[RMDB]
RNA sequence: GGGAACGACUCGAGUAGAGUCGAAAACCAGGCUUGGGUGAUGGUCUGUAAAUGUAUGACAGCGUACGACCAACCUGCUGGAUCUGCUGAUCGGCGGUUUGCGAAAUACCAGCAGCAAGGUCGCCUGGGUUGCUCAGCAUUUCGAUGCUGAGCAACCAAAAGAAACAACAACAACAAC
Reactivity to 2A3 in 0.01 (KOAc 150mM, MgCl2 10mM, bicine 150mM(pH8.5), 24C), signal-to-noise 1, nucleotides 027 to 126: c150c000a010g000g000c040u010u050g060g000g000u130g010a150u070g040g020u010c010u000g050u110a200a190a190u070g090u150a130u110g040a000c000a080g020c030g080u140a050c030g040a000c000c000a000a010c000c000u000g000c010u000g040g000a000u040c030u080g000c000u120g140a170u060c070g170g000c000g050g090u040u140u160g160c040g040a010a010a010u130a070c000c000a010g000c000a000g010c000a020a020g090g000u000c010g110c000c000u010g050
Source: RMDB library OK1LIB, as collected in RNAgym. Structure probing data (2A3) for a 177-nucleotide construct. The reactions ran in a buffer of 150 mM KOAc, 10 mM MgCl2 and 150 mM bicine (pH 8.5), at 24 C.